The data come from the RNA Mapping Database (RMDB), library OK2TRN. This 177-nucleotide RNA was probed chemically with DMS and 2A3. Values cover nucleotides 27 to 126.
RNA sequence: GGGAACGACUCGAGUAGAGUCGAAAAUAACGCCGGCGCAGCGGCCCCGAGCGCGUUCGUGGGGCUGCCGGCCCCGACGUUCACCGGAUGGGCGCAGAACGCCGCCGGCGCGCUGGUGGCCACCUGGCCAUAUCACAGCGUUCGCGCUGUGAUAUGGAAAAGAAACAACAACAACAAC
Reactivity to DMS in 0.01 (KOAc 150mM, MgCl2 10mM, bicine 150mM(pH8.5), 24C), signal-to-noise 5, nucleotides 027 to 126: u010a160a200c090g020c000c010g000g020c060g020c080a130g030c080g010g010c010c020c050c060g010a100g030c110g010c030g000u010u000c020g030u000g010g000g000g030c010u000g020c210c160g010g010c000c010c000c010g000a060c010g020u000u000c090a140c050c040g000g000a210u000g020g010g020c010g020c070a110g000a060a300c080g000c030c020g010c010c000g010g010c000g010c000g020c020u000g010g010u010g010g010c010c010a110c130c070u010g010g000
Reactivity to 2A3 in 0.01 (KOAc 150mM, MgCl2 10mM, bicine 150mM(pH8.5), 24C), signal-to-noise 3, nucleotides 027 to 126: u070a100a040c040g000c040c020g040g000c100g030c070a090g050c020g050g050c020c020c000c010g070a040g000c060g000c010g030u050u040c030g020u110g000g010g000g030c030u060g140c010c060g050g000c000c010c010c010g090a020c010g010u080u170c040a040c070c010g030g040a140u120g190g000g000c020g020c060a050g060a190a020c020g010c020c020g020c020c000g060g030c000g000c000g000c000u060g050g040u060g020g000c000c000a080c010c020u020g070g030